[RMDB]
RNA sequence: GGGAACGACUCGAGUAGAGUCGAAAAGAUAUGGACGUUGUUGGGAGCUCCCGGGUCGGAAACGACCCAGGGAGCUUUGAUCAACACGACGUCCUAAGUCAAAGUCUUGCGCUUCGGCGCAAGACAAGAUCAAGUCUUAGUUCGCUAAGACUUGAUCAAAAGAAACAACAACAACAAC
Reactivity to 2A3 in 0.01 (KOAc 150mM, MgCl2 10mM, bicine 150mM(pH8.5), 24C), signal-to-noise 1, nucleotides 027 to 126: g020a000u020a000u070g000g000a000c000g020u050u010g010u020u030g040g000g010a020g000c020u000c000c010c010g000g000g030u000c010g030g000a040a010a010c020g000a000c000c060c010a030g010g020g000a000g020c010u000u020u010g000a000u010c010a000a010c040a000c100g070a020c060g000u000c000c000u000a010a000g010u020c000a100a080a060g010u000c010u010u020g010c010g000c000u050u170c300g230g000c010g020c010a000a000g000a000c000a000a010
Reactivity to DMS in 0.01 (KOAc 150mM, MgCl2 10mM, bicine 150mM(pH8.5), 24C), signal-to-noise 3, nucleotides 027 to 126: g000a010u000a020u010g000g000a020c010g030u000u010g000u000u000g010g010g010a010g030c000u000c000c000c000g000g000g030u000c000g010g000a010a010a030c000g010a020c000c000c000a020g030g000g020a000g040c000u000u000u000g010a020u020c020a010a020c010a100c260g020a060c040g010u000c000c000u010a000a090g000u000c010a170a130a160g020u000c000u000u020g010c000g010c000u000u000c300g050g010c010g000c010a000a010g000a010c000a020a050